[RMDB]
RNA sequence: GGGAACGACUCGAGUAGAGUCGAAAAUGCAGUUUGGCUAGCAAGUGCAGACGCUGCGCUGGUUGCUGCUGCAGACGCAGAAGCAGAUGCACUAGCAGCAGAGGUAGCUGCAGCGGUAGCCGAUGUUGCAGCUGAGGCUGCAGAGGUAGAUGCUGCAGCGUCUCCGGCAAUUCGUUGCCGGAGACGCAAAAGAAACAACAACAACAAC
Reactivity to 2A3 in 0.01 (KOAc 150mM, MgCl2 10mM, bicine 150mM(pH8.5), 24C), signal-to-noise 1, nucleotides 027 to 156: u130g000c000a000g040u070u030u090g170g000c000u000a040g040c010a000a130g030u030g040c000a020g010a300c020g000c000u000g000c010g000c060u050g090g230u110u070g030c000u000g020c000u000g060c000a000g030a000c250g020c020a030g020a290a040g060c200a000g040a170u160g000c030a040c100u040a140g000c000a000g000c000a000g020a000g050g190u090a110g040c020u090g000c000a000g010c000g050g000u000a010g000c000c000g010a210u220g080u110u160g020c000a000g020c000u090g180a130g260g000c070u090g000c000a030g040a040g000g020u160a040g000a100u060g020c020u000g000c030a000
The record gives the reactivity of an RNA of 207 nucleotides to 2A3. Reactivities are given for positions 27 through 156. Source: RMDB library OK3TST, as collected in RNAgym.